[RMDB]
RNA sequence: GGGAACGACUCGAGUAGAGUCGAAAAAAUUUAGAUUAUCCAGGUGUAGCGGUGAAAUUCGUAGAGAUCUGGUGGAUAAAGAACCGGUGGCGAAGGCGAAAGAUAACCGCUGAAAUGCUGAAGUGAAGAUAUGAAGAUCAUUCGUGAUCUUCAUAUCAAAAGAAACAACAACAACAAC
Reactivity to DMS in 0.01 (KOAc 150mM, MgCl2 10mM, bicine 150mM(pH8.5), 24C), signal-to-noise 6, nucleotides 027 to 126: a050a050u010u000u010a060g000a160u010u010a070u000c030c020a100g000g010u010g020u000a030g020c010g000g010u010g000a080a140a080u000u000c020g020u000a130g010a130g000a100u000c010u010g020g010u000g010g000a140u010a070a070a120g000a110a030c020c020g000g020u000g000g010c300g000a080a120g000g000c010g000a040a030a030g010a050u000a130a040c020c020g010c020u000g010a050a050a090u010g010c020u000g010a050a120g010u010g000a110a110
Reactivity to 2A3 in 0.01 (KOAc 150mM, MgCl2 10mM, bicine 150mM(pH8.5), 24C), signal-to-noise 2, nucleotides 027 to 126: a020a010u220u190u080a070g010a050u030u020a040u150c010c020a020g000g020u030g030u070a010g000c000g000g000u020g050a040a030a040u010u010c020g000u020a020g010a010g010a140u010c010u010g000g020u050g040g040a070u130a180a160a080g040a050a040c010c010g030g020u030g050g040c050g010a030a010g140g000c000g000a000a020a010g110a010u040a030a010c030c000g000c000u010g040a010a030a020u140g000c010u020g030a140a040g060u110g110a090a010

The record gives the reactivity of an RNA of 177 nucleotides to DMS and 2A3. 2A3 adducts were read by reverse transcription with SuperScript II with manganese. The DMS profile rests on 9,282 reads. It was measured as part of the RMDB library M2PK90. The reactions ran in a buffer of 150 mM KOAc, 10 mM MgCl2 and 150 mM bicine (pH 8.5), at 24 C.